[RMDB]
RNA sequence: GGGAACGACUCGAGUAGAGUCGAAAAGGACUUAGUUACUGACGCAUUCUGCCCCCCAUUCAUUUCUGGUCGUGUAGGUCCCGCAUCUGUGGAGCGCUAUUCAGGCCAGGAUGCGGACGAUGAUGUAUGGAUGCUGAUCAUUCGUGAUCAGCAUCCAAAAAGAAACAACAACAACAAC
Reactivity to DMS in 0.01 (KOAc 150mM, MgCl2 10mM, bicine 150mM(pH8.5), 24C), signal-to-noise 1, nucleotides 027 to 126: g030g000a010c030u000u010a090g010u010u000a080c120u010g010a070c080g010c100a130u010u020c040u000g020c050c000c000c020c000c070a080u000u000c100a050u010u000u000c060u000g030g000u000c030g000u000g010u010a040g020g010u000c060c030c000g010c020a080u000c080u010g000u000g040g020a070g030c130g040c100u000a150u000u020c150a080g010g010c030c020a190g010g000a030u000g020c050g020g000a030c120g030a040u000g020a070u010g010u000a060